[RMDB]
RNA sequence: GGGAACGACUCGAGUAGAGUCGAAAAGAGCACAUUCAUCGCGCAAUGCUUGACGCCGUCCUCGUUUCCGGUAAUGAGGCAACCACCGGCGCGGCCGUAGUAGGCGUACUGUCCAUCCUCGUUGAGCACUUAGAUUAUCGUUCGCGAUAAUCUAAGUAAAAGAAACAACAACAACAAC
Reactivity to 2A3 in 0.01 (KOAc 150mM, MgCl2 10mM, bicine 150mM(pH8.5), 24C), signal-to-noise 6, nucleotides 027 to 126: g040a000g020c040a010c000a110u090u090c020a030u100c050g020c010g010c070a060a110u100g030c020u050u100g040a070c040g010c020c020g040u070c010c010u010c010g020u020u070u020c060c000g010g040u110a120a080u080g040a020g070g000c020a040a080c020c030a030c010c020g030g000c030g020c030g050g010c020c020g080u100a090g050u020a040g030g040c020g010u040a050c030u050g030u020c010c010a040u020c010c010u030c030g070u060u120g060a030g040c040
Reactivity to DMS in 0.01 (KOAc 150mM, MgCl2 10mM, bicine 150mM(pH8.5), 24C), signal-to-noise 9, nucleotides 027 to 126: g000a070g010c050a060c090a090u000u000c070a070u010c060g010c060g020c060a100a080u010g000c030u000u000g010a100c090g010c040c040g010u010c020c020u000c020g020u000u000u000c040c080g010g000u010a060a070u000g010a060g010g010c260a060a060c060c060a090c090c030g010g000c080g020c040g010g000c030c040g010u000a080g010u010a100g010g010c040g020u010a050c080u000g010u000c030c040a060u000c020c020u000c070g010u000u000g010a100g010c150